[RMDB]
Conditions: 150 mM KOAc, 10 mM MgCl2 and 150 mM bicine (pH 8.5), 24 C. An RNA of 207 nucleotides, treated with DMS and 2A3 and read out base by base. For DMS the reverse transcriptase was MarathonRT.
RNA sequence: GGGAACGACUCGAGUAGAGUCGAAAAUUUAACGCUGUUUUAUUGGCGCAAAGGUUUACGGAUAAACAACUAAUAAUUAAACCUUUUGUGUGCGACACGUGGUUGUUUAACGUACUCUUUAAUCGCUUUGGGGAUGUGUCCUUCGGGACACAUCCAACUUAUGAUACUGAUUCGUCAGUAUCAUAAGAAAAGAAACAACAACAACAAC
Reactivity to DMS in 0.01 (KOAc 150mM, MgCl2 10mM, bicine 150mM(pH8.5), 24C), signal-to-noise 2, nucleotides 027 to 156: u000u000u010a070a160c050g020c020u000g030u010u000u020u000a120u000u030g010g020c010g010c080a170a050a080g000g010u000u010u000a030c030g000g020a230u010a020a040a040c010a020a070c020u000a080a110u010a060a220u000u000a080a190a060c020c030u020u000u000u010g030u010g040u010g010c080g000a120c140a070c110g030u000g010g000u000u000g010u000u000u000a040a040c020g000u010a040c050u000c030u000u000u000a100a130u000c030g020c040u000u010u010g020g000g000g030a020u010g040u000g000u000c000c000u000u000c300g040g020g010a000c000a000c020a000u000c000c000a000a020
Reactivity to 2A3 in 0.01 (KOAc 150mM, MgCl2 10mM, bicine 150mM(pH8.5), 24C), signal-to-noise 6, nucleotides 027 to 156: u070u070u080a070a010c030g000c040u030g110u070u080u040u100a170u090u190g030g000c010g000c030a070a050a000g010g010u020u050u020a020c020g010g050a170u080a070a040a020c010a010a010c000u050a050a130u090a120a050u250u150a080a090a110c030c000u070u120u140u150g050u010g020u050g060c160g070a050c020a010c050g030u040g010g000u000u000g000u000u020u020a030a010c030g000u020a010c010u000c000u050u050u060a120a150u110c020g020c010u090u090u130g130g030g000g020a000u000g000u000g010u020c000c000u020u050c200g030g000g000a000c000a000c000a000u000c000c000a000a000
The DMS profile rests on 5,683 reads. In probing experiments dimethyl sulfate is read out at A N1 and C N3, which are open when not base-paired. Source: RMDB library M2RFPK, as collected in RNAgym.